The record gives the reactivity of an RNA of 177 nucleotides to 2A3 and DMS.
Values cover nucleotides 27 to 126.
For 2A3, 2,663 sequencing reads were counted.
RNA sequence: GGGAACGACUCGAGUAGAGUCGAAAAGAUAUGGAGGCAGCUUUUGACGCAUGGCGAACAGGUCUCGGAAACGAGACCGGUGCGAUAAGCUGCUCCUAAGUCAAAGGAUCAACUUCGGUUGAUCCAAGAUCGUUUGAGAGUUCGCUCUCAAACGAUCAAAAGAAACAACAACAACAAC
Reactivity to 2A3 in 0.01 (KOAc 150mM, MgCl2 10mM, bicine 150mM(pH8.5), 24C), signal-to-noise 2, nucleotides 027 to 126: g020a020u170a060u220g030g010a050g260g170c020a000g010c000u000u140u150u270g240a100c050g000c020a030u080g170g040c180g070a070a040c060a100g010g000u000c010u010c000g020g000a080a060a050c000g000a010g040a010c020c010g010g000u020g000c000g010a000u010a090a000g000c040u000g000c010u030c000c010u050a150a030g040u020c070a240a000a000g050g000a030u000c000a010a000c000u070u130c300g070g000u000u000g020a000u000c010c000a000a010
Reactivity to DMS in 0.01 (KOAc 150mM, MgCl2 10mM, bicine 150mM(pH8.5), 24C), signal-to-noise 2, nucleotides 027 to 126: g000a030u000a300u010g000g000a020g000g060c000a020g020c010u000u000u000u000g040a190c080g000c020a030u010g010g000c060g020a080a040c000a070g010g030u000c000u010c000g000g000a050a080a160c020g020a010g010a000c000c000g000g020u000g020c030g000a150u000a000a020g000c000u000g000c000u000c020c000u000a070a160g000u000c040a100a080a140g000g010a000u000c000a010a000c000u000u010c260g020g000u000u010g000a010u000c000c000a010a030